The record gives the reactivity of an RNA of 177 nucleotides to 2A3 and DMS.
RNA sequence: GGGAACGACUCGAGUAGAGUCGAAAAAUACAGCCAAAUUCAUACAUAUUUUGAUUAUGAGUGUGGUAAGAUAUCUGUAGAACCAUAUUGUGGAAGAGCGAUCAUGUCACCGCAGUUUGCUGAUCAAUGAUUAUGCACAAUUCGUUGUGCAUAAUCAAAAAGAAACAACAACAACAAC
Reactivity to 2A3 in 0.01 (KOAc 150mM, MgCl2 10mM, bicine 150mM(pH8.5), 24C), signal-to-noise 7, nucleotides 027 to 126: a000u120a010c040a020g020c000c000a010a120a020u050u080c020a020u070a080c040a050u120a210u130u240u200u220g160a150u080u140a010u040g020a000g070u020g000u020g030g040u070a050a040g050a140u100a040u090c030u040g060u060a020g020a100a040c020c020a070u090a090u130u160g070u080g050g010a050a030g030a030g080c020g010a020u060c060a080u120g030u050c020a010c050c010g000c030a010g030u050u100u090g100c070u060g040a070u110c030a020a040
Reactivity to DMS in 0.01 (KOAc 150mM, MgCl2 10mM, bicine 150mM(pH8.5), 24C), signal-to-noise 6, nucleotides 027 to 126: a070u020a040c040a140g000c020c020a010a050a040u010u010c020a040u000a020c160a050u020a110u030u040u030u010g000a160u030u010a020u010g000a030g010u000g010u000g000g000u010a040a060g000a080u020a030u020c030u000g010u010a080g010a070a130c030c020a070u030a080u020u020g020u010g010g010a060a030g000a080g020c050g000a050u000c070a080u010g000u000c040a040c030c050g010c120a060g000u010u010u000g010c060u000g010a100u010c070a040a150
Conditions: 150 mM KOAc, 10 mM MgCl2 and 150 mM bicine (pH 8.5), 24 C.